Conditions: 150 mM KOAc, 10 mM MgCl2 and 150 mM bicine (pH 8.5), 24 C. An RNA of 207 nucleotides, treated with 2A3 and read out base by base. For 2A3, 847 sequencing reads were counted.
RNA sequence: GGGAACGACUCGAGUAGAGUCGAAAACAUUGUUCUGAUCAUCUGAAGAUCAGCUAUUAGAAGAGAAAGAUCAGUUAAGUCCUUUGGACCUGAUCAGCGUGAUACAAGAACUACUGAUUUCAACUUCAAAACGGGUGCUACUUCGGUAGCACCCGAACAUCUAUCAACGCUUCGGCGUUGAUAGAUGAAAAGAAACAACAACAACAAC
Reactivity to 2A3 in 0.01 (KOAc 150mM, MgCl2 10mM, bicine 150mM(pH8.5), 24C), signal-to-noise 2, nucleotides 027 to 156: c010a060u090u150g050u230u040c030u040g000a000u000c010a050u070c100u230g100a120a020g000a060u000c000a010g060c010u220a210u190u110a110g030a070a000g040a040g020a120a050a000g060a010u030c020a000g010u110u250a170a010g010u020c010c010u060u170u230g060g030a050c020c050u090g050a170u050c010a000g050c010g000u070g030a100u040a130c080a080a030g020a000a000c020u090a010c010u050g000a040u030u040u120c080a090a060c020u050u030c020a030a040a060a010c000g000g000g000u020g010c000u000a010c000u010u000c150g040g000u000a000g000c000a000c000c000c000g010a000a000